[RMDB]
The data come from the RNA Mapping Database (RMDB), library OK3TST. An RNA of 207 nucleotides, treated with 2A3 and DMS and read out base by base. DMS adducts were read by reverse transcription with MarathonRT. For 2A3, 2,263 sequencing reads were counted. Conditions: 150 mM KOAc, 10 mM MgCl2 and 150 mM bicine (pH 8.5), 24 C. Values cover nucleotides 27 to 156.
RNA sequence: GGGAACGACUCGAGUAGAGUCGAAAACUGCAGGUCAACGGUUCCUCUUCAGAUCAGCUAUUGCAGAAGAAAGGUCAGCCAAGCGCUCUGGGCCGGGACGACUGUAUAUAGGAGCUUCUGAUUUCAACCAGAAGCUAACUCUCUCCGAAACAAUGAGCUACGGUAAAUAGUUCGCUAUUUACCGUAGAAAAGAAACAACAACAACAAC
Reactivity to 2A3 in 0.01 (KOAc 150mM, MgCl2 10mM, bicine 150mM(pH8.5), 24C), signal-to-noise 4, nucleotides 027 to 156: c020u020g000c010a030g020g050u040c040a090a100c090g070g020u110u130c000c010u030c000u080u050c030a060g020a230u030c040a020g040c030u100a090u280u210g000c020a030g020a130a000g050a050a140a000g040g040u090c020a010g050c030c020a170a030g050c040g020c100u020c060u100g030g000g000c000c000g010g010g010a000c020g010a020c010u040g070u060a060u020a030u090a160g130g030a010g020c000u010u000c000u010g110a170u120u210u270c060a070a060c030c000a000g010a010a000g000c000u010a040a030c010u000c010u000c010u000c030c030g100a100a110a030c060a040a180u170g000a030g040
Reactivity to DMS in 0.01 (KOAc 150mM, MgCl2 10mM, bicine 150mM(pH8.5), 24C), signal-to-noise 2, nucleotides 027 to 156: c050u000g020c040a040g010g020u010c020a090a090c040g010g000u000u020c020c030u000c040u000u010c090a150g000a090u010c050a140g030c010u000a070u000u010g020c040a130g030a080a110g000a020a110a120g020g000u000c040a140g020c020c020a100a130g020c130g050c040u000c080u000g000g010g040c040c050g000g020g020a140c030g000a110c020u000g010u000a130u000a160u000a100g000g000a100g000c000u010u000c000u010g000a040u010u020u020c140a100a050c070c000a030g000a030a000g060c010u000a010a050c050u000c050u000c000u000c030c030g000a220a060a100c080a060a090u010g000a140g030